[RMDB]
RNA sequence: GGGAACGACUCGAGUAGAGUCGAAAAAGCUGGAGCAGUAUUCUAGUUUCAUCUUGUAAAGACAAUGAUUAGCAGUUUCGGGGGCGUAAUGCCCUCAGCUGAUUCUCAAACUCUGAACAGGUGAGUCACUCAUCGACUGUUUCGACAGUCGAUGAGUAAAAGAAACAACAACAACAAC
Reactivity to DMS in 0.01 (KOAc 150mM, MgCl2 10mM, bicine 150mM(pH8.5), 24C), signal-to-noise 2, nucleotides 027 to 126: a040g000c020u010g000g000a060g000c080a070g020u020a090u000u000c030u010a070g000u020u000u000c010a010u010c000u000u000g000u000a030a180a050g000a040c080a050a300u000g000a000u000u000a010g010c010a030g000u000u000u060c170g050g020g000g020g000c000g010u020a070a050u030g030c010c000c000u000c000a020g010c020u010g000a030u000u000c000u010c000a010a090a290c300u000c000u010g010a300a030c000a020g000g020u000g000a010g000u020c070
Reactivity to 2A3 in 0.01 (KOAc 150mM, MgCl2 10mM, bicine 150mM(pH8.5), 24C), signal-to-noise 4, nucleotides 027 to 126: a000g040c040u060g030g000a040g000c070a050g090u150a140u070u070c020u050a010g050u030u040u010c010a020u030c020u140u150g010u050a010a040a000g010a010c030a070a100u010g000a000u000u020a000g010c000a000g030u050u120u250c110g000g000g010g020g000c020g050u190a070a080u300g000c000c000c000u000c000a000g000c000u000g010a000u020u000c000u000c000a030a020a020c010u000c000u010g010a030a000c000a020g050g000u010g030a020g090u090c020
An RNA of 177 nucleotides, treated with DMS and 2A3 and read out base by base. 2A3 adducts were read by reverse transcription with SuperScript II with manganese.